[RMDB]
RNA sequence: GGGAACGACUCGAGUAGAGUCGAAAAGCACGUUGGUUCAGAUGAUGGGCCCGCAUCUGUACGAAAGUGAGACGAAAGUCCAGCCUACGUGCAUGAGCACGCGGGCCCCGUGCUCACCAGCAAAAGAGGUCCUCAUUACCUUCGGGUAAUGAGGACCAAAAGAAACAACAACAACAAC
Reactivity to 2A3 in 0.01 (KOAc 150mM, MgCl2 10mM, bicine 150mM(pH8.5), 24C), signal-to-noise 1, nucleotides 027 to 126: g040c000a000c060g060u020u030g020g020u110u080c000a020g020a180u030g020a110u170g010g030g000c090c000c000g000c020a020u000c010u050g130u160a040c010g110a150a010a060g110u080g000a240g000a000c060g090a020a060a000g000u000c000c000a010g000c020c000u010a000c000g020u000g000c000a000u050g010a020g020c020a000c010g000c020g000g010g070c000c060c000c000g000u010g000c000u000c000a010c000c000a010g120c070a000a060a060a150g280a010
The record gives the reactivity of an RNA of 177 nucleotides to 2A3. Reactivities are given for positions 27 through 126. 2A3 adducts were read by reverse transcription with SuperScript II with manganese.